Chemical mapping of a 177-nucleotide RNA with 2A3 and DMS. Values cover nucleotides 27 to 126. Conditions: 150 mM KOAc, 10 mM MgCl2 and 150 mM bicine (pH 8.5), 24 C. The 2A3 profile rests on 3,587 reads. For 2A3 the reverse transcriptase was SuperScript II with manganese. For DMS the reverse transcriptase was MarathonRT. Source: RMDB library TTRDES, as collected in RNAgym. 2A3 is a SHAPE reagent: it acylates the 2'-hydroxyl of flexible nucleotides of all four kinds.
RNA sequence: GGGAACGACUCGAGUAGAGUCGAAAAGAUAUGGAGUACUGAAGGUCAACAGCACCAGGCAUCGGAAACGAUGCUGGUGACAUGACCUGAUAGUACUCCUAAGUCAAAACGCACGUUCGCGUGCGAAGCUUUAGGGGAGGUUCGCCUCCCCUAAAGCAAAAGAAACAACAACAACAAC
Reactivity to 2A3 in 0.01 (KOAc 150mM, MgCl2 10mM, bicine 150mM(pH8.5), 24C), signal-to-noise 2, nucleotides 027 to 126: g000a010u040a030u210g010g000a000g010u020a000c010u010g020a050a000g000g000u000c020a040a080c030a300g010c000a010c010c000a060g300g130c010a000u000c020g000g040a110a040a040c000g000a000u000g020c000u010g000g010u000g050a080c000a050u060g000a000c020c000u000g010a000u060a000g000u010a000c020u020c000c000u000a010a010g010u000c010a000a000a070a070c000g000c000a020c010g050u090u110c300g000c010g140u010g000c020g010a100a010
Reactivity to DMS in 0.01 (KOAc 150mM, MgCl2 10mM, bicine 150mM(pH8.5), 24C), signal-to-noise 3, nucleotides 027 to 126: g010a050u000a300u000g020g000a010g010u000a000c000u010g000a300a020g010g000u000c010a000a090c300a180g000c010a000c000c000a020g020g040c000a010u010c000g000g020a120a090a120c000g020a010u000g020c000u010g000g010u000g040a030c140a150u000g000a020c000c000u020g000a140u030a020g010u000a000c000u010c000c000u000a020a020g010u000c050a070a050a140a180c030g000c000a000c020g060u000u030c190g000c020g020u000g000c000g030a070a090